Notes
Structure probing data (2A3 and DMS) for a 177-nucleotide construct. DMS adducts were read by reverse transcription with MarathonRT. For 2A3 the reverse transcriptase was SuperScript II with manganese. Reactivities are given for positions 27 through 126.
RNA sequence: GGGAACGACUCGAGUAGAGUCGAAAAAUGACGCUAGCAGUGGAUAGUCGAUGCCCAAUCGUUAAAAGAAGUGAUAAUACUUUUAACGUGUAGGAAGGCGUGAAGGUAACAUUGAAGAUUCAGUGUGCGUUUAAUUUCUAUUCGUAGAAAUUAAACGAAAAGAAACAACAACAACAAC
Reactivity to 2A3 in 0.01 (KOAc 150mM, MgCl2 10mM, bicine 150mM(pH8.5), 24C), signal-to-noise 9, nucleotides 027 to 126: a000u110g020a010c010g010c030u030a030g040c020a050g040u040g070g050a090u050a060g070u070c060g020a060u110g030c010c000c000a000a050u050c000g000u000u010a010a000a010a010g100a100a020g080u060g210a100u110a270a050u130a140c000u000u000u000u000a010a010c010g010u010g030u030a040g040g060a090a040g040g000c030g020u050g020a060a010g080g040u090a040a010c010a040u020u040g030a070a040g090a240u090u060c020a020g030u020g020u030g070
Reactivity to DMS in 0.01 (KOAc 150mM, MgCl2 10mM, bicine 150mM(pH8.5), 24C), signal-to-noise 9, nucleotides 027 to 126: a090u020g010a110c140g010c030u000a050g020c060a100g010u010g010g010a080u010a060g010u010c030g010a090u010g020c020c010c020a110a110u020c000g010u000u000a000a000a010a010g010a120a090g010u020g010a130u030a120a110u030a070c010u000u000u000u000a000a010c000g010u010g010u020a100g010g000a090a090g000g000c070g010u010g010a090a070g000g000u010a070a070c030a030u000u000g000a050a130g000a120u020u000c030a020g010u010g000u000g010